[RMDB]
Structure probing data (2A3 and DMS) for a 177-nucleotide construct. For 2A3, 44,913 sequencing reads were counted. For DMS the reverse transcriptase was MarathonRT. The reactions ran in a buffer of 150 mM KOAc, 10 mM MgCl2 and 150 mM bicine (pH 8.5), at 24 C. As a SHAPE reagent, 2A3 marks flexible, mostly unpaired nucleotides at the ribose 2'-OH. DMS (dimethyl sulfate) methylates the pairing face of unpaired adenines and cytosines.
RNA sequence: GGGAACGACUCGAGUAGAGUCGAAAAACAUGGCAGAGACAUACGCCGGAAAACGGUAGAGAUACCGUCUGCCUUGUAGUCGGUGUACAGGAGGUGCAAGCCUGUCAUUACGUAAUGUCGUACGCUGAGAUAAUUAGUUAUUCGUAACUAAUUAUCUAAAAGAAACAACAACAACAAC
Reactivity to 2A3 in 0.01 (KOAc 150mM, MgCl2 10mM, bicine 150mM(pH8.5), 24C), signal-to-noise 9, nucleotides 027 to 126: a000c030a040u050g020g000c010a000g020a010g020a070c010a040u140a030c030g020c000c000g010g020a070a080a000a010c010g000g000u010a010g020a000g000a060u070a060c010c010g060u000c010u010g010c000c000u010u110g020u010a030g020u020c030g000g000u020g000u020a020c020a020g030g020a020g050g070u100g080c040a050a010g070c000c000u010g020u020c010a030u040u130a040c050g030u070a070a060u050g020u030c010g010u020a010c020g000c020u010g000
Reactivity to DMS in 0.01 (KOAc 150mM, MgCl2 10mM, bicine 150mM(pH8.5), 24C), signal-to-noise 9, nucleotides 027 to 126: a070c050a060u010g000g000c000a030g000a160g010a080c090a070u010a060c070g010c030c040g000g010a050a070a100a090c020g000g010u000a020g000a160g010a170u010a030c060c000g010u000c030u010g000c020c020u000u020g000u000a050g010u010c040g000g000u000g000u020a010c020a040g000g010a070g000g010u020g010c210a080a100g000c010c000u000g000u000c020a040u010u020a100c140g010u010a060a050u010g000u010c020g000u020a090c060g010c020u000g000